[RMDB]
Structure probing data (DMS and 2A3) for a 177-nucleotide construct. Conditions: 150 mM KOAc, 10 mM MgCl2 and 150 mM bicine (pH 8.5), 24 C. The data come from the RNA Mapping Database (RMDB), library OK2TRN.

RNA sequence: GGGAACGACUCGAGUAGAGUCGAAAACACUGAUGUACUCUGUGUGCACAUCAUCGAUGAGCAGGCAUGGCCUGUGCCUGUGCCGCUCUGAGCCUUCCUAGGUGUGGCCUGGCACAUAAUGAGGCAGAUAAACCCGUUUGUUCGCAAACGGGUUUAUAAAAGAAACAACAACAACAAC
Reactivity to DMS in 0.01 (KOAc 150mM, MgCl2 10mM, bicine 150mM(pH8.5), 24C), signal-to-noise 3, nucleotides 027 to 126: c110a100c160u020g020a090u000g000u010a050c020u000c060u010g000u010g010u010g010c040a060c030a050u000c030a060u000c120g010a130u000g000a070g010c030a100g020g010c010a030u000g000g010c020c080u020g000u010g010c010c000u000g040u010g020c010c030g020c000u000c020u000g000a170g000c000c060u000u020c100c080u010a150g020g020u000g020u000g000g000c050c120u000g000g020c020a010c000a020u000a050a070u000g000a050g000g010c040a070g010
Reactivity to 2A3 in 0.01 (KOAc 150mM, MgCl2 10mM, bicine 150mM(pH8.5), 24C), signal-to-noise 1, nucleotides 027 to 126: c030a020c070u100g100a070u030g070u190a130c000u000c020u040g000u020g010u000g020c000a020c000a050u020c000a010u080c060g170a140u030g030a050g120c180a170g020g000c020a000u070g040g000c010c080u200g050u130g060c000c040u070g000u050g010c010c020g000c020u000c050u020g000a000g000c000c050u230u250c040c040u090a000g000g020u050g020u010g020g000c000c070u040g010g050c010a020c010a020u090a050a060u200g020a040g010g040c020a010g000